Chemical mapping of a 177-nucleotide RNA with DMS and 2A3. The DMS profile rests on 1,944 reads.
RNA sequence: GGGAACGACUCGAGUAGAGUCGAAAAGUUUUUUUAGGCAGUUAAUUUUUGGUUUGGGGGAUGAAGCAGCAAAAUAUCACCUGUAUUCUACCACUUCCUUAGAACAUAAAAUCUUGCGGACGCCAGAAUACUCGUUAUCGUUCGCGAUAACGAGUAUAAAAGAAACAACAACAACAAC
Reactivity to DMS in 0.01 (KOAc 150mM, MgCl2 10mM, bicine 150mM(pH8.5), 24C), signal-to-noise 2, nucleotides 027 to 126: g020u000u000u000u020u010u020u080a150g010g020c050a050g020u000u020a100a020u030u000u010u000u020g030g020u000u010u000g000g010g000g000g000a060u000g020a030a020g000c030a050g000c160a030a030a060a120u070a100u030c130a040c150c010u020g020u010a040u000u000c010u000a230c150c100a050c120u040u030c000c030u000u040a060g000a070a030c030a060u010a020a030a010a110u010c090u010u010g020c030g030g000a030c080g000c080c010a050g000a110
Reactivity to 2A3 in 0.01 (KOAc 150mM, MgCl2 10mM, bicine 150mM(pH8.5), 24C), signal-to-noise 3, nucleotides 027 to 126: g000u000u000u000u010u010u020u070a030g000g000c050a020g020u070u120a040a070u130u050u070u180u140g080g010u100u040u060g050g020g000g000g000a010u070g000a040a000g000c000a020g020c060a040a010a300a110u180a040u110c000a020c060c030u000g020u010a300u020u050c000u030a100c000c010a090c040u050u070c000c000u040u040a030g060a110a010c010a000u180a050a030a030a040u050c050u060u110g000c000g100g060a060c050g000c000c010a000g060a090